[RMDB]
RNA sequence: GGGAACGACUCGAGUAGAGUCGAAAAGCUUCUUCUUGUUCUCGAGGGCCUUCCUUCUGCGGUGAUCCUCCCUCUCCUUGUCGGUGAACCCGCUCUUGUGAGGCCUCUUCCCAGGUCCGGAGUCGACGUAUACUCCUAACUUCGGUUAGGAGUAUACAAAAGAAACAACAACAACAAC
Reactivity to DMS in 0.01 (KOAc 150mM, MgCl2 10mM, bicine 150mM(pH8.5), 24C), signal-to-noise 4, nucleotides 027 to 126: g010c080u010u010c030u000u000c030u010u000g010u000u000c030u000c030g000a110g010g010g020c050c040u010u000c060c020u000u000c040u000g010c080g020g020u020g010a130u000c020c030u000c030c020c010u000c020u010c040c040u000u000g000u000c090g000g010u000g000a100a170c170c030c030g010c030u000c040u000u000g020u000g010a100g000g020c030c020u010c070u010u000c020c000c030a160g010g000u000c030c020g000g010a060g000u000c020g020a080c180
Reactivity to 2A3 in 0.01 (KOAc 150mM, MgCl2 10mM, bicine 150mM(pH8.5), 24C), signal-to-noise 2, nucleotides 027 to 126: g010c050u040u010c010u050u010c000u030u120g050u110u020c010u010c040g020a070g000g070g030c000c030u050u030c040c000u080u020c040u070g060c050g020g050u090g070a130u070c020c020u030c030c020c010u050c020u020c000c020u050u090g080u060c040g000g030u050g040a040a040c010c000c010g030c000u030c030u070u090g060u050g050a070g000g010c000c000u010c000u000u030c000c000c000a040g010g030u010c010c010g040g010a030g030u040c010g020a030c010

Record summary
Source: RMDB library 15KREP, as collected in RNAgym. This 177-nucleotide RNA was probed chemically with DMS and 2A3. For 2A3, 2,409 sequencing reads were counted. Conditions: 150 mM KOAc, 10 mM MgCl2 and 150 mM bicine (pH 8.5), 24 C. 2A3 adducts were read by reverse transcription with SuperScript II with manganese. For DMS, 4,885 sequencing reads were counted. Values cover nucleotides 27 to 126. DMS (dimethyl sulfate) methylates the pairing face of unpaired adenines and cytosines.